[RMDB]
RNA sequence: GGGAACGACUCGAGUAGAGUCGAAAAUACGAUGCUACGAUGCAUUACGCGCGGCAUCGGCCGAUUACGUAAUGCAUAUAUGCUACGCGUACGGCCGUAGCCGAUUACGGCGCUAGCUACGCGGCGCCAUAGCCCCCGGGUUCGCCCGGGGGCUAUGAAAAGAAACAACAACAACAAC
Reactivity to 2A3 in 0.01 (KOAc 150mM, MgCl2 10mM, bicine 150mM(pH8.5), 24C), signal-to-noise 1, nucleotides 027 to 126: u190a030c090g030a050u040g000c020u060a080c100g110a050u180g000c010a020u030u040a050c080g050c000g000c010g050g020c030a060u050c010g000g000c020c000g110a200u000u150a050c020g000u030a050a030u070g000c010a010u080a030u010a000u190g000c000u000a040c120g000c000g020u000a000c000g040g020c030c000g050u030a040g000c050c000g090a070u120u150a050c090g010g000c020g010c060u010a050g030c000u030a070c120g030c020g040g000c040g000c040
Reactivity to DMS in 0.01 (KOAc 150mM, MgCl2 10mM, bicine 150mM(pH8.5), 24C), signal-to-noise 3, nucleotides 027 to 126: u010a090c130g010a070u000g010c000u010a120c180g040a110u020g010c010a010u000u000a070c100g000c250g020c010g000g000c010a240u010c150g030g030c000c010g000a080u000u010a050c010g000u000a090a100u000g000c000a070u000a060u000a070u000g000c020u000a130c160g020c020g000u000a020c030g010g010c010c030g010u000a200g000c040c080g000a070u000u000a040c120g000g000c010g030c100u000a060g010c080u000a070c070g000c010g020g020c050g010c080